The record gives the reactivity of an RNA of 307 nucleotides to DMS and 2A3. The reactions ran in a buffer of 150 mM KOAc, 10 mM MgCl2 and 150 mM bicine (pH 8.5), at 24 C. For DMS the reverse transcriptase was MarathonRT. It was measured as part of the RMDB library POS240. For 2A3 the reverse transcriptase was SuperScript II with manganese.
RNA sequence: GGGAACGACUCGAGUAGAGUCGAAAAAUCAGGGGCUCUGAAACGACGAGCUCCCGGUGCCUGCGCCGAUACGCCCUCGGCCUCCACCGUGUUGAUCUGCCCACAAGGCGGCUUGACGAGAUUGCGACUGGAACGAAGUUGUCCUGAGGGACGGGGAAGCGUUUACGUAUCAGCCAGAUCGAAAGACUCGACAGCGAGUCGCCCACCGGCAACCACGAGCCGAACGGCACUUGAUCCAGUCGAGAAGCACGGUCCGCGAACUGUUCAAGGCCCGAUUCGUCGGGCCUAAAAGAAACAACAACAACAAC
Reactivity to DMS in 0.01 (KOAc 150mM, MgCl2 10mM, bicine 150mM(pH8.5), 24C), signal-to-noise 2, nucleotides 027 to 266: a080u040c030a150g020g000g010g010c000u010c020u000g010a070a270a190c150g050a140c100g000a020g010c000u000c000c000c060g010g020u000g000c120c000u000g000c140g050c000c000g010a040u010a060c060g000c110c040c040u000c000g000g000c060c010u020c070c030a060c010c030g000u020g010u040u000g010a030u000c070u000g000c000c000c000a100c300a080a300g020g000c020g020g000c110u010u000g050a100c010g000a020g000a120u000u000g010c020g000a040c040u000g000g000a030a060c110g000a020a130g000u030u000g020u040c020c020u010g010a100g000g000g030a050c040g000g000g010g000a160a200g010c070g000u010u000u000a090c060g030u000a050u020c070a090g000c060c070a030g000a140u010c060g000a080a220a190g000a040c000u000c030g020a110c240a170g030c010g000a000g000u010c000g020c030c010c020a100c300c050g020g000c030a070a240c060c080a110c050g000a120g000c010c020g020a110a260c230g000g000c020a060c030u000u000g000a120u000c010c020a060g000u000c000g010a080g010a110a090g000c060a100c050g000g000u000c000c060g000c060g000a100a130c110u000g000u000u020c100a190
Reactivity to 2A3 in 0.01 (KOAc 150mM, MgCl2 10mM, bicine 150mM(pH8.5), 24C), signal-to-noise 2, nucleotides 027 to 266: a000u020c040a010g010g030g000g010c060u000c000u080g110a140a160a090c190g130a050c040g010a020g000c000u040c000c000c000g000g050u100g030c030c000u060g010c090g010c050c000g010a030u050a020c070g100c020c020c000u010c010g060g020c000c000u030c000c020a080c010c020g030u030g020u210u030g020a110u030c030u060g020c000c020c000a050c060a000a030g030g000c000g010g050c010u050u120g050a090c020g030a020g100a250u030u200g050c030g030a010c060u060g000g020a020a080c020g010a150a020g030u140u050g090u130c000c020u090g010a040g020g040g060a060c000g020g000g000g000a070a070g120c030g030u060u150u150a060c060g030u030a050u030c020a000g010c020c000a060g020a090u190c010g030a090a090a050g010a010c000u010c000g020a020c000a080g080c030g000a000g000u000c000g000c010c000c000a040c040c000g000g020c010a020a130c010c030a060c190g020a030g070c000c000g030a050a030c030g020g000c000a010c040u020u090g010a040u090c010c030a030g000u010c030g010a010g050a060a000g020c000a020c090g010g030u040c090c000g100c010g110a110a000c040u120g280u300u290c000a040